Chemical mapping of a 177-nucleotide RNA with DMS and 2A3. 2A3 is a SHAPE reagent: it acylates the 2'-hydroxyl of flexible nucleotides of all four kinds. For DMS, 1,388 sequencing reads were counted.
RNA sequence: GGGAACGACUCGAGUAGAGUCGAAAAGCUACUGCUCUUGGUCAUAAAGGAGUAGCUUAAGACGAUAAGCAGGGGGAUAACCGUAAAGACGCUCAUCACCAAGAGUGCGGGCAAGGUGUAGCGAAAGGUACAGCGUUAUCUUCGGAUAACGCUGUACAAAAGAAACAACAACAACAAC
Reactivity to DMS in 0.01 (KOAc 150mM, MgCl2 10mM, bicine 150mM(pH8.5), 24C), signal-to-noise 2, nucleotides 027 to 126: g010c010u000a010c000u000g000c030u000c060u000u000g030g020u020c200a160u010a050a110a030g000g000a040g020u020a000g010c000u010u000a070a140g010a050c080g030a090u010a070a110g000c010a120g020g030g000g000g000a120u000a100a070c050c020g010u000a030a020a050g010a130c050g010c030u000c060a070u000c050a050c040c050a100a090g000a050g010u000g010c100g010g000g000c060a020a100g020g010u000g000u010a030g010c050g010a040a090a090g020
Reactivity to 2A3 in 0.01 (KOAc 150mM, MgCl2 10mM, bicine 150mM(pH8.5), 24C), signal-to-noise 2, nucleotides 027 to 126: g010c000u010a000c010u060g110c010u000c030u090u090g050g130u170c070a130u090a100a130a000g020g000a020g000u000a010g000c000u000u010a030a070g010a010c010g020a020u010a120a050g030c010a110g020g000g000g030g040a030u010a120a020c000c000g000u060a070a140a000g070a000c060g000c020u020c030a120u020c030a040c040c020a030a000g050a010g040u060g050c090g010g030g000c020a050a050g060g000u050g010u060a010g000c020g050a120a000a010g130